[RMDB]
RNA sequence: GGGAACGACUCGAGUAGAGUCGAAAAUAUGUUGGGCGGUAUAUACCAGUUAGUGCUCAAGCUAAUGGGGUGAAGUAGGAUCUCAGUAGAGAAUGAUUUACAUCAUCUCCAAGUGUCUUCAAAACUGAAGAUACGGAAGUUUCGACUUCCGUAUCUUAAAAGAAACAACAACAACAAC
Reactivity to 2A3 in 0.01 (KOAc 150mM, MgCl2 10mM, bicine 150mM(pH8.5), 24C), signal-to-noise 2, nucleotides 027 to 126: u190a040u090g040u040u040g020g000g010c050g000g140u050a040u030a010u050a140c050c110a050g060u040u070a090g050u060g070c010u020c010a030a000g040c040u160a170a000u090g000g030g000g030u010g020a030a010g000u010a030g040g060a040u010c010u000c020a160g090u230a050g060a000g010a040a110u100g040a060u030u080u020a040c030a030u000c000a010u010c020u000c040c000a070a020g070u070g050u110c000u040u100c030a100a170a090a070c060u150g090
Reactivity to DMS in 0.01 (KOAc 150mM, MgCl2 10mM, bicine 150mM(pH8.5), 24C), signal-to-noise 4, nucleotides 027 to 126: u000a070u010g010u010u000g000g000g010c040g020g000u010a030u010a070u010a220c110c030a100g020u000u000a070g020u010g010c040u010c080a060a130g010c030u000a090a100u000g000g000g010g030u000g010a040a050g010u000a040g010g010a060u000c030u010c030a150g010u030a070g000a060g010a060a060u010g010a090u000u000u000a060c070a100u000c010a000u000c000u010c000c050a050a090g000u000g010u000c060u000u000c080a060a070a080a070c200u000g010